The record gives the reactivity of an RNA of 207 nucleotides to 2A3 and DMS. For DMS, 2,330 sequencing reads were counted. For DMS the reverse transcriptase was MarathonRT. 2A3 adducts were read by reverse transcription with SuperScript II with manganese.
[RMDB]
RNA sequence: GGGAACGACUCGAGUAGAGUCGAAAAUAACCCCUUUGAGAACUGACCGGUCCUUUUCCCACCCUGCCGAGCUUCCUGCCGUUAGUGGAGCGGAUUCCGGGUUGCUCUCCGACCCUCAGAUUUUCUCUUAAGGUCUGGCAGGGAGUGGAGCUCCCAGCACAUCACUACUCUUCGGAGUAGUGAUGUGAAAAGAAACAACAACAACAAC
Reactivity to 2A3 in 0.01 (KOAc 150mM, MgCl2 10mM, bicine 150mM(pH8.5), 24C), signal-to-noise 2, nucleotides 027 to 156: u100a030a060c020c000c020c000u050u130u110g060a080g010a070a050c030u040g030a020c040c060g000g060u050c010c010u060u030u060u070c000c000c020a020c010c010c010u020g000c000c020g000a000g030c000u010u020c000c010u010g010c010c000g050u040u070a110g050u170g140g070a010g010c030g050g000a070u220u060c120c050g000g030g020u030u020g010c010u000c020u040c070c060g040a030c010c000c020u050c060a000g020a040u100u060u180u070c060u010c010u080u080a060a020g050g000u020c070u070g020g000c000a000g010g010g010a010g010u110g010g000a020g020c010u020c010c010c000a020g110
Reactivity to DMS in 0.01 (KOAc 150mM, MgCl2 10mM, bicine 150mM(pH8.5), 24C), signal-to-noise 1, nucleotides 027 to 156: u010a110a170c040c010c020c030u000u030u010g010a040g000a150a040c030u010g010a110c070c070g050g000u030c020c040u000u030u000u000c010c030c000a150c050c010c010u010g050c030c010g030a220g020c030u010u000c010c010u000g000c040c010g000u000u000a140g040u000g010g000a140g030c020g040g000a250u000u020c110c100g020g030g010u010u000g000c050u000c010u000c090c020g020a070c030c000c000u000c080a090g030a110u010u000u000u010c110u000c120u030u000a140a130g030g010u000c020u020g000g050c010a090g000g010g030a020g040u010g040g000a150g040c040u000c000c010c000a170g000
It was measured as part of the RMDB library VIROID. The RNA was probed in 150 mM KOAc, 10 mM MgCl2 and 150 mM bicine (pH 8.5) at 24 C. In probing experiments dimethyl sulfate is read out at A N1 and C N3, which are open when not base-paired. For 2A3, 1,825 sequencing reads were counted. Reactivities are rounded to 0.1 and cut off at 0 and 3.